Overview: The record gives the reactivity of an RNA of 177 nucleotides to DMS and 2A3.

RNA sequence: GGGAACGACUCGAGUAGAGUCGAAAAACACCGUGCAAAAAGCACGGAAAAGUCGUGCAAAAGAGAGGCUAGAAAGAUGCACGACAAAGCUAGCCUACAAAAGACAGCGGGAAAACCGCUGUCGAAAGGUGAUGUUGCAGUUCGCUGCAGCAUCACCAAAAGAAACAACAACAACAAC
Reactivity to DMS in 0.01 (KOAc 150mM, MgCl2 10mM, bicine 150mM(pH8.5), 24C), signal-to-noise 3, nucleotides 027 to 126: a090c100a150c010c000g120u040g040c030a090a050a060a120a140g010c000a030c010g000g010a030a030a100a070g000u000c000g020u000g000c000a050a040a100a120g020a160g010a060g000g000c010u010a050g000a120a050a130g010a110u020g030c000a000c040g000a020c000a030a040a100g020c010u000a040g000c010c010u000a080c240a090a090a090a060g000a000c000a010g000c000g010g020g020a110a000a090a100c000c000g020c000u000g000u000c000g000a000a080a090
Reactivity to 2A3 in 0.01 (KOAc 150mM, MgCl2 10mM, bicine 150mM(pH8.5), 24C), signal-to-noise 6, nucleotides 027 to 126: a000c040a030c010c000g000u000g000c030a080a120a150a160a040g000c000a000c000g010g020a040a020a000a010g010u010c000g000u000g000c020a010a020a210a000g160a070g020a020g030g040c030u040a010g070a050a140a010g110a060u090g000c010a000c000g000a000c030a000a030a000g030c010u020a010g000c000c000u060a090c080a020a080a000a010g010a000c000a000g000c000g000g020g050a030a150a030a130c000c000g000c000u000g000u000c000g000a010a010a000
The data come from the RNA Mapping Database (RMDB), library OK1LIB. For 2A3 the reverse transcriptase was SuperScript II with manganese.